[RMDB]
RNA sequence: GGGAACGACUCGAGUAGAGUCGAAAAGACAAAUGCAGCAUAUUAGGCUAAGCAGGAAAGGGACGGUAGCUCCUGGUGUCACUUCAUACGGUGUGAUGCAUCUGCGUCGUGCACACAUGCACCCAAAAUCGAGUACGACAUUCGUGUCGUACUCGAUAAAAGAAACAACAACAACAAC
Reactivity to 2A3 in 0.01 (KOAc 150mM, MgCl2 10mM, bicine 150mM(pH8.5), 24C), signal-to-noise 2, nucleotides 027 to 126: g070a020c050a040a090a020u170g000c010a010g010c000a040u040a130u280u200a140g040g000c030u050a040a080g060c000a020g020g090a090a050a070g010g050g010a020c020g060g070u010a000g020c030u030c000c000u030g000g040u030g040u050c010a010c070u070u090c030a080u130a240c130g080g000u050g000u020g030a100u000g000c030a040u050c030u080g000c030g060u090c020g000u040g040c030a010c010a000c010a040u080g070c030a060c000c020c000a090a040a000
Reactivity to DMS in 0.01 (KOAc 150mM, MgCl2 10mM, bicine 150mM(pH8.5), 24C), signal-to-noise 2, nucleotides 027 to 126: g020a050c100a070a090a150u010g010c040a070g010c000a070u000a090u010u000a070g020g020c030u000a090a170g030c030a040g000g000a040a090a070g010g000g010a060c070g010g000u010a070g000c050u010c030c050u010g000g000u000g000u010c040a030c100u000u000c040a050u040a140c140g010g030u000g020u000g010a090u000g010c040a020u010c050u030g000c120g020u020c050g040u010g000c020a010c050a040c100a090u000g020c050a100c000c020c040a050a030a070